Chemical mapping of a 177-nucleotide RNA with DMS and 2A3. The RNA was probed in 150 mM KOAc, 10 mM MgCl2 and 150 mM bicine (pH 8.5) at 24 C. In probing experiments dimethyl sulfate is read out at A N1 and C N3, which are open when not base-paired. 2A3 adducts were read by reverse transcription with SuperScript II with manganese. Reactivities are given for positions 27 through 126.

RNA sequence: GGGAACGACUCGAGUAGAGUCGAAAAAUCCUGGCAUUCGUGCCAGGAUGUUUACCGAGAAAGUCCCUCGGUAUAAAAGGGCAACCCUAGGAAACAAGGGAAUAAUCGCAGUGUUCGCACUGCGAAACUCGUUCACAGAAUUCGUUCUGUGAACGAGAAAAGAAACAACAACAACAAC
Reactivity to DMS in 0.01 (KOAc 150mM, MgCl2 10mM, bicine 150mM(pH8.5), 24C), signal-to-noise 2, nucleotides 027 to 126: a000u000c010c010u000g000g000c000a030u020u000c200g020u000g000c000c000a000g010g000a020u000g000u000u010u000a050c000c000g000a050g000a050a050a130g000u000c010c010c000u000c000g000g010u000a050u020a050a080a100a060g000g000g020c150a100a140c030c000c000u000a210g010g000a170a060a090c120a060a020g000g000g000a100a100u000a110a150u000c000g010c000a020g000u000g010u000u000c200g000c000a000c010u000g010c000g000a010a050a070
Reactivity to 2A3 in 0.01 (KOAc 150mM, MgCl2 10mM, bicine 150mM(pH8.5), 24C), signal-to-noise 1, nucleotides 027 to 126: a000u000c000c000u000g010g000c000a020u030u030c190g130u070g000c000c000a000g000g000a000u010g010u000u040u020a020c000c000g000a020g050a050a210a010g170u050c000c010c000u000c000g000g000u060a070u100a030a030a000a010g060g040g000c040a060a060c000c000c040u010a030g020g210a140a060a010c020a050a060g070g020g040a020a070u110a080a060u020c000g000c000a000g000u000g010u060u040c060g040c060a000c000u000g000c000g000a000a000a000